[RMDB]
RNA sequence: GGGAACGACUCGAGUAGAGUCGAAAAUAAGACCUUUUAAUCAAAUACCGAGCAAAUCAGAACCCAGCCACUUCCAGUCACGUGAAUGAGUCCUGGGAAAGGCGCAUGCGCUCUCAUUGCAGCCUCGGCGUUUGUAGAAGAGGAGCAUCUGCUCCAGCCUGCAGGACAAUUUCGAUUGUCCUGCAGGAAAAGAAACAACAACAACAAC
Reactivity to 2A3 in 0.01 (KOAc 150mM, MgCl2 10mM, bicine 150mM(pH8.5), 24C), signal-to-noise 2, nucleotides 027 to 156: u240a060a030g060a080c000c000u070u030u040u170a110a040u110c030a020a040a030u020a020c030c040g010a000g010c050a100a020a110u120c050a070g080a060a060c010c010c010a000g020c040c000a040c020u060u020c030c020a110g040u160c080a030c110g120u110g080a050a000u090g010a040g100u070c020c020u000g000g000g130a070a090a000g040g000c030g020c130a080u080g040c020g010c010u010c040u030c060a060u090u120g100c080a050g050c030c040u020c000g000g000c010g010u000u010u050g060u080a020g030a090a000g110a050g010g010a000g000c010a030u170c110u300g010c010u000c000c010a010g040